An RNA of 170 nucleotides, treated with 2A3 and DMS and read out base by base. High DMS reactivity at an A or C suggests that its Watson-Crick edge is free. For 2A3 the reverse transcriptase was SuperScript II with manganese. For 2A3, 19,870 sequencing reads were counted. The reactions ran in a buffer of 150 mM KOAc, 10 mM MgCl2 and 150 mM bicine (pH 8.5), at 24 C. For DMS the reverse transcriptase was MarathonRT.

[RMDB]
RNA sequence: GGGAACGACUCGAGUAGAGUCGAAAAUCUUCCUGCUUAGAAGAGGAGUCUCCUGGACGCUUCCGCCCGCUCGGGAUGGGCCUCAGUGCCGACGAGGAGUCCGCAGGUGGGAGGAUCAGCCACCGGAAUACGGGUAUCUUCGGAUACCCGAAAAGAAACAACAACAACAAC
Reactivity to 2A3 in 0.01 (KOAc 150mM, MgCl2 10mM, bicine 150mM(pH8.5), 24C), signal-to-noise 8, nucleotides 027 to 129: u060c020u040u020c000c000u010g040c040u090u140a060g030a150a020g050a100g060g020a060g060u020c020u000c010c010u030g020g020a040c030g030c050u090u000c030c020g030c020c010c000g080c020u090c070g100g010g020a080u100g040g040g000c000c000u080c030a050g030u070g110c020c010g040a080c040g030a020g050g010a020g020u010c000c000g040c030a030g000g010u030g020g000g010a030g020g010a030u040c040a010g040c000c010a080c020c010g060g090a060a030u150a080
Reactivity to DMS in 0.01 (KOAc 150mM, MgCl2 10mM, bicine 150mM(pH8.5), 24C), signal-to-noise 6, nucleotides 027 to 129: u030c040u020u010c010c040u030g050c140u020u090a140g020a100a080g010a050g050g000a050g000u030c050u030c000c000u030g030g020a070c100g020c070u020u010c030c110g020c000c070c000g000c090u030c080g030g010g030a100u030g000g020g010c030c020u030c070a080g030u050g090c050c080g000a130c080g000a030g030g030a100g010u020c010c010g040c140a090g010g010u000g000g000g000a090g000g000a040u020c020a100g020c040c080a090c040c010g030g030a100a000u080a070